[RMDB]
RNA sequence: GGGAACGACUCGAGUAGAGUCGAAAACUCCACGCCGGGUAAUGGACGACGGCGGCGUGUGGCGAACAGGGAUACCGGUAGUCAGUGUCUGGAACAUCCCAAGGGGCGGCGGAGCUAGCACCCCGACAAAACGGGCACAAGUUCGCUUGUGCCCGAACAUCAUGAUAAUGUUCGCAUUAUCAUGAUGAAAAGAAACAACAACAACAAC
Reactivity to DMS in 0.01 (KOAc 150mM, MgCl2 10mM, bicine 150mM(pH8.5), 24C), signal-to-noise 3, nucleotides 027 to 156: c030u000c020c000a040c020g000c000c000g020g010g030u010a070a110u010g020g000a070c070g010a070c010g000g010c010g000g030c040g030u000g030u010g010g000c020g000a060a070c070a140g020g020g020a100u000a070c010c030g020g020u010a110g030u010c050a060g020u000g000u000c030u010g020g020a110a110c040a130u010c010c000c010a140a140g020g000g020g030c080g010g010c040g020g010a170g020c030u010a080g020c030a060c020c000c000c030g000a120c090a050a020a080a140c010g010g000g000c000a020c020a020a050g030u000u010c290g010c040u020u000g020u000g010c020c000c010g000a010a040
Reactivity to 2A3 in 0.01 (KOAc 150mM, MgCl2 10mM, bicine 150mM(pH8.5), 24C), signal-to-noise 7, nucleotides 027 to 156: c020u020c010c010a010c020g010c010c000g050g010g030u120a130a100u130g100g060a040c070g020a020c020g040g110c010g000g010c020g020u070g020u050g060g040c080g020a070a050c050a100g040g010g010a020u040a110c020c020g020g020u070a050g080u070c060a020g050u040g050u110c030u060g010g020a040a050c030a080u020c010c020c040a080a100g010g000g000g000c070g030g000c040g040g070a070g070c030u030a020g010c010a050c010c010c000c000g010a010c030a010a110a030a020c010g010g000g000c000a000c000a000a000g020u050u100c180g010c120u000u000g000u000g000c000c000c000g000a000a000

An RNA of 207 nucleotides, treated with DMS and 2A3 and read out base by base. Values are in units of 0.01, from 0 to 300, in steps of 10. For DMS, 7,785 sequencing reads were counted. The reactions ran in a buffer of 150 mM KOAc, 10 mM MgCl2 and 150 mM bicine (pH 8.5), at 24 C. The data come from the RNA Mapping Database (RMDB), library M2RFPK. For 2A3, 10,180 sequencing reads were counted.